[RMDB]
RNA sequence: GGGAACGACUCGAGUAGAGUCGAAAAAAAGAUAUGGACCUAUGAGGUCAUCGAUCUGGUGAAGCUAAGCAGCAUCGGAAACGAUGCUGAACGCGCCACCAGGGAGACCCAUAGGUCCUAAGUCAAACACAGCACUAUACUUCGGUAUAGUGCUGUGAAAAGAAACAACAACAACAAC
Reactivity to DMS in 0.01 (KOAc 150mM, MgCl2 10mM, bicine 150mM(pH8.5), 24C), signal-to-noise 2, nucleotides 027 to 126: a040a090a120g000a010u000a070u010g000g000a020c000c000u000a000u010g000a190g010g020u000c000a180u000c300g000a030u000c000u010g010g020u010g020a130a160g010c000u000a040a060g000c000a000g010c000a020u000c010g030g010a020a030a040c010g030a030u000g000c000u010g020a020a020c120g010c070g020c200c010a020c000c000a010g010g000g000a010g000a010c000c000c000a010u000a010g000g010u000c000c000u000a000a010g000u000c010a150a110a200
Structure probing data (DMS) for a 177-nucleotide construct. It was measured as part of the RMDB library TTRDES. The reactions ran in a buffer of 150 mM KOAc, 10 mM MgCl2 and 150 mM bicine (pH 8.5), at 24 C.